[RMDB]
The record gives the reactivity of an RNA of 177 nucleotides to DMS and 2A3. The reactions ran in a buffer of 150 mM KOAc, 10 mM MgCl2 and 150 mM bicine (pH 8.5), at 24 C. It was measured as part of the RMDB library OK2TRN.
RNA sequence: GGGAACGACUCGAGUAGAGUCGAAAAACGACCUCGUGGCGGGCCUCAACAUCGGCGACGUCGUCUACAUCUGGCGUCGUGACGGCCUCGCUCACGACACGGCUCCCGCAGCCGGUCAGAUGGUGUGCUCCCAAUCGGUAUUCGUACCGAUUGGGAGAAAAGAAACAACAACAACAAC
Reactivity to DMS in 0.01 (KOAc 150mM, MgCl2 10mM, bicine 150mM(pH8.5), 24C), signal-to-noise 3, nucleotides 027 to 126: a110c100g010a090c040c050u000c010g050u000g000g020c000g000g020g010c010c030u000c090a110a090c160a110u000c130g000g010c010g020a020c020g010u000c010g000u000c170u000a120c200a080u000c100u000g010g000c010g000u000c010g020u000g000a050c170g000g000c020c030u020c020g020c020u040c040a020c040g020a040c120a110c030g000g000c010u000c040c080c160g000c140a110g010c030c000g000g010u010c050a090g000a090u010g010g020u000g000u010g020
Reactivity to 2A3 in 0.01 (KOAc 150mM, MgCl2 10mM, bicine 150mM(pH8.5), 24C), signal-to-noise 2, nucleotides 027 to 126: a000c030g070a060c010c000u040c050g000u000g010g010c010g020g040g000c030c000u110c070a050a120c070a140u160c060g060g000c000g040a000c010g000u000c000g040u040c080u180a070c030a170u070c120u150g000g000c000g000u000c010g000u010g000a030c030g010g020c000c020u070c070g000c010u060c000a010c000g000a000c050a030c040g000g000c000u020c050c100c050g060c060a000g020c010c000g020g000u080c070a030g020a070u110g040g000u100g050u080g030